[RMDB]
RNA sequence: GGGAACGACUCGAGUAGAGUCGAAAAACGAAUCUCUUCGGAGAUUCGUAAAAAGAUAUGGAUCUCCUAGCUUUUGACGACUACGCACUCGGAAACGAGUGCGAGUCGAUAAGCUGUCAGAUCCUAAGUCAAAAACGGUUUGGUUCGCCAAACCGAACCUUAACGUGACCUUCGGGUCACGUUAAGGAAAAGAAACAACAACAACAAC
Reactivity to 2A3 in 0.01 (KOAc 150mM, MgCl2 10mM, bicine 150mM(pH8.5), 24C), signal-to-noise 2, nucleotides 027 to 156: a000c000g000a000a010u000c010u010c030u030u100c200g090g000a000g000a000u000u000c000g010u010a000a050a000a000a020g070a010u090a040u090g000g000a000u000c000u010c030c020u060a000g010c010u140u070u130u250g290a240c060g000a010c000u300a060c120g000c030a000c000u000c010g010g060a080a140a090c000g000a000g000u000g030c000g010a000g010u030c000g000a000u010a000a000g010c000u010g040u020c010a000g000a010u000c000c000u000a060a000g020u030c040a020a010a120a080a100c030g010g010u000u000u000g000g040u020u070c270g020c100c000a000a000a000c000c050g000a050a030